[RMDB]
RNA sequence: GGGAACGACUCGAGUAGAGUCGAAAAACUAUCUAGCUUAAUUUUCGGUCAUUUUUGAUAGUGUAGCCUUGCGUUUGACAAGCGUUGAGGUGAAAUAAGGUCUUAGCCUUGCUUUUGAGUUUUGGAAGAUGAGCGAAGUAGGGUGAAGUAGUCAUCUAGGUGCAUAGAUGUUCGCAUCUAUGCACCUAAAAGAAACAACAACAACAAC
Reactivity to 2A3 in 0.01 (KOAc 150mM, MgCl2 10mM, bicine 150mM(pH8.5), 24C), signal-to-noise 1, nucleotides 027 to 156: a000c000u000a020u040c030u070a030g090c040u110u150a160a160u190u210u240u220c140g010g050u090c080a180u080u070u070u090u180g110a070u040a000g060u040g010u040a010g000c010c030u000u030g060c020g050u060u000u000g070a040c050a090a000g000c010g090u100u290g010a030g000g030u060g030a000a050a070u200a070a000g060g020u010c010u050u140a020g010c000c000u000u030g000c010u100u060u040u080g210a150g020u100u080u100u120g020g060a070a010g010a030u050g030a020g070c010g000a000a000g010u070a010g030g000g000u030g000a000a000g000u070a020g030u030c010a030u080c110u030